[RMDB]
RNA sequence: GGGAACGACUCGAGUAGAGUCGAAAAGAUAUGGAGUCUCAUAGGGAGAAUGCCAUCGGAAACGAUGGGCAUUCAUCGAUCUAUACGCGAGACUCCUAAGUCAAACGUAAUCGUUCGCGAUUACGAACGGAGUUGACAAGUUCGCUUGUCAACUCCGAAAAGAAACAACAACAACAAC
Reactivity to DMS in 0.01 (KOAc 150mM, MgCl2 10mM, bicine 150mM(pH8.5), 24C), signal-to-noise 1, nucleotides 027 to 126: g000a020u000a300u000g000g000a010g030u010c000u010c020a090u000a050g000g040g030a090g010a040a000u000g040c000c000a030u000c050g000g000a050a050a140c000g020a000u010g010g020g020c000a000u020u000c000a240u010c220g000a100u000c000u000a080u020a080c280g020c260g010a010g010a020c000u000c010c000u000a010a030g010u000c030a090a220a190c000g020u000a000a030u020c000g030u020u010c160g010c040g010a010u010u000a010c010g010a080a160
Reactivity to 2A3 in 0.01 (KOAc 150mM, MgCl2 10mM, bicine 150mM(pH8.5), 24C), signal-to-noise 1, nucleotides 027 to 126: g010a000u080a000u230g000g010a010g020u060c060u000c080a020u080a060g000g100g000a110g030a030a020u020g000c030c000a010u000c000g040g000a070a040a000c000g020a020u050g110g230g030c000a000u000u000c000a030u140c050g020a050u010c050u090a090u030a080c270g010c110g190a000g020a010c000u010c000c000u000a040a000g000u000c050a140a000a000c090g000u010a000a000u030c030g010u100u060c300g040c000g210a020u030u020a000c030g010a090a020

Chemical mapping of a 177-nucleotide RNA with DMS and 2A3. The 2A3 profile rests on 1,914 reads. For DMS the reverse transcriptase was MarathonRT. Source: RMDB library TTRDES, as collected in RNAgym. Conditions: 150 mM KOAc, 10 mM MgCl2 and 150 mM bicine (pH 8.5), 24 C.